This 177-nucleotide RNA was probed chemically with 2A3 and DMS.
The RNA was probed in 150 mM KOAc, 10 mM MgCl2 and 150 mM bicine (pH 8.5) at 24 C.
For DMS the reverse transcriptase was MarathonRT.
Values cover nucleotides 27 to 126.
The data come from the RNA Mapping Database (RMDB), library OK2TST.
For DMS, 2,663 sequencing reads were counted.
2A3 is a SHAPE reagent: it acylates the 2'-hydroxyl of flexible nucleotides of all four kinds.
RNA sequence: GGGAACGACUCGAGUAGAGUCGAAAAAUAUGAGGAGUGCUGACCGGGCUUUCGGCUUGGCCGAGCUCGAAGAAGUCGAUCGGCAUCGUCUAUCCAGCAGCGGGCAGCUCGCUCCGGUGACUGGAUAUAUAAAUCCUAGCUUCGGCUAGGAUUUAUAAAAAGAAACAACAACAACAAC
Reactivity to 2A3 in 0.01 (KOAc 150mM, MgCl2 10mM, bicine 150mM(pH8.5), 24C), signal-to-noise 1, nucleotides 027 to 126: a040u230a060u130g000a050g190g030a020g040u030g000c040u050g040a000c020c010g070g000g020c040u150u120u120c020g040g000c060u230u210g190g050c050c050g000a020g000c030u080c120g010a000a050g110a070a000g070u100c060g060a170u000c000g000g050c000a010u030c010g160u020c040u030a010u000c000c010a000g000c000a040g090c020g000g000g000c020a070g080c100u140c180g020c070u080c050c040g040g000u000g000a100c030u030g000g000a000u020a000
Reactivity to DMS in 0.01 (KOAc 150mM, MgCl2 10mM, bicine 150mM(pH8.5), 24C), signal-to-noise 2, nucleotides 027 to 126: a100u000a050u010g000a080g000g010a080g010u010g030c020u000g010a010c060c010g040g010g000c020u000u000u000c050g010g000c000u010u000g010g030c210c110g010a040g000c030u010c060g000a040a110g000a080a090g020u000c030g000a040u000c000g020g010c010a070u000c030g010u000c050u000a030u000c000c010a000g000c020a020g020c000g010g010g010c020a170g020c220u020c180g010c030u020c010c020g000g000u000g000a120c010u010g000g000a020u000a030